[RMDB]
RNA sequence: GGGAACGACUCGAGUAGAGUCGAAAAUAACAGUGUCCUGGCGUGAAAACGUCAGGCAACUAGCAAUCACUGUAUGCUAGUUGCAUUGUGUUUUCACACAAUGAUGCUGUUUAACAGUGAUUGAUACGAACAAGAGGUAUUUCGAUAUCUCUUGUUCAAAAGAAACAACAACAACAAC
Reactivity to 2A3 in 0.01 (KOAc 150mM, MgCl2 10mM, bicine 150mM(pH8.5), 24C), signal-to-noise 1, nucleotides 027 to 126: u060a000a000c000a000g000u000g010u010c000c000u000g000g000c000g000u020g040a050a020a010a000c000g000u000c000a000g000g000c000a000a000c000u000a000g000c000a010a020u050c000a000c000u000g000u010a040u030g000c000u000a000g000u000u000g000c000a000u000u000g000u000g020u010u100u110u170c110a010c000a000c000a000a000u000g000a000u000g000c000u000g000u000u000u020a010a000c000a000g010u000g000a010u050u120g040a030u050a080c080
Reactivity to DMS in 0.01 (KOAc 150mM, MgCl2 10mM, bicine 150mM(pH8.5), 24C), signal-to-noise 8, nucleotides 027 to 126: u010a000a000c010a000g010u000g000u000c000c000u010g000g000c000g000u000g000a160a070a140a010c000g010u000c010a010g000g010c010a000a000c000u000a010g000c000a050a140u010c010a010c010u010g010u000a170u000g010c000u000a000g010u000u010g010c000a030u000u000g010u000g010u000u030u030u030c260a070c000a000c010a010a000u000g000a010u000g010c000u000g000u000u000u000a070a020c000a010g010u000g000a240u040u030g000a120u030a090c210